Notes: Source: RMDB library OK2TRN, as collected in RNAgym. An RNA of 177 nucleotides, treated with 2A3 and DMS and read out base by base.
RNA sequence: GGGAACGACUCGAGUAGAGUCGAAAAAGCAAGGUGGAGGACUAAUGACUCUAGAAAAGUCACCGUGAGUCUGACCAGCACCCCUUCACUCAGAGCUUUCUAUCCGAGGCACGUUAAGGGAGGUGGCCCUUGUCCUGGGAUUCGUCCCAGGACAAGGAAAAGAAACAACAACAACAAC
Reactivity to 2A3 in 0.01 (KOAc 150mM, MgCl2 10mM, bicine 150mM(pH8.5), 24C), signal-to-noise 1, nucleotides 027 to 126: a000g010c060a060a010g000g030u010g020g040a040g000g070a030c040u050a100a090u170g000a010c000u020c020u060a070g240a060a140a030a000g030u040c000a010c030c040g050u020g000a010g020u020c000u040g100a120c010c080a000g050c010a070c030c030c000c050u020u030c020a020c000u090c040a040g020a030g160c000u060u150u000c020u050a050u020c000c030g000a050g060g000c060a010c100g060u090u070a050a070g030g020g010a040g000g030u020g030g020c040
Reactivity to DMS in 0.01 (KOAc 150mM, MgCl2 10mM, bicine 150mM(pH8.5), 24C), signal-to-noise 2, nucleotides 027 to 126: a030g010c060a100a120g000g040u020g000g010a170g000g010a150c140u010a170a110u010g020a030c000u000c000u010a170g000a100a090a070a070g000u010c030a020c120c060g040u000g020a040g010u000c030u020g000a210c120c130a110g010c090a140c220c070c010c020u000u000c030a000c020u010c090a050g000a160g000c060u020u010u000c060u020a050u010c030c020g050a050g000g010c090a030c050g010u000u020a040a020g000g000g000a080g010g010u000g000g000c020
Reactivities are given for positions 27 through 126. For 2A3, 1,216 sequencing reads were counted. Reactivities are rounded to 0.1 and cut off at 0 and 3. Conditions: 150 mM KOAc, 10 mM MgCl2 and 150 mM bicine (pH 8.5), 24 C.